Chemical mapping of a 177-nucleotide RNA with 2A3 and DMS. For DMS the reverse transcriptase was MarathonRT. Reactivities are given for positions 27 through 126. For 2A3, 2,678 sequencing reads were counted. Conditions: 150 mM KOAc, 10 mM MgCl2 and 150 mM bicine (pH 8.5), 24 C.

[RMDB]
RNA sequence: GGGAACGACUCGAGUAGAGUCGAAAAGAUAUGGAACAAUUUCACAGAGCUCUGACAGCGAAGAACGAGCUCGGAAACGAGCUCGGGAGCUGCAAUGGAGCGACGAAGUGAAAUUGUUCCUAAGUCACCCUUACACAUUGUUCGCAAUGUGUAAGGGAAAAGAAACAACAACAACAAC
Reactivity to 2A3 in 0.01 (KOAc 150mM, MgCl2 10mM, bicine 150mM(pH8.5), 24C), signal-to-noise 2, nucleotides 027 to 126: g010a010u100a010u180g000g010a010a000c000a000a000u000u000u020c000a020c000a030g170a070g050c010u050c000u220g300a280c070a020g080c080g300a300a020g000a050a020c020g000a000g000c020u000c020g000g010a040a020a030c010g010a000g070c000u010c000g030g020g010a020g010c000u000g010c020a010a300u300g030g010a020g020c030g140a060c040g080a190a040g000u000g000a020a000a000u000u000g000u010u020c000c000u010a020a000g010u000c050a060
Reactivity to DMS in 0.01 (KOAc 150mM, MgCl2 10mM, bicine 150mM(pH8.5), 24C), signal-to-noise 1, nucleotides 027 to 126: g000a060u020a300u010g000g000a000a010c010a030a010u000u010u000c000a010c000a080g000a300g000c000u000c000u020g000a150c030a020g000c000g000a150a300g000a150a210c030g000a030g000c000u010c000g010g010a070a080a250c000g030a000g000c000u030c010g000g020g020a070g000c010u000g000c220a090a060u030g000g000a000g000c000g010a110c190g010a110a080g000u000g000a010a010a020u000u010g010u000u000c010c000u030a000a010g010u000c080a230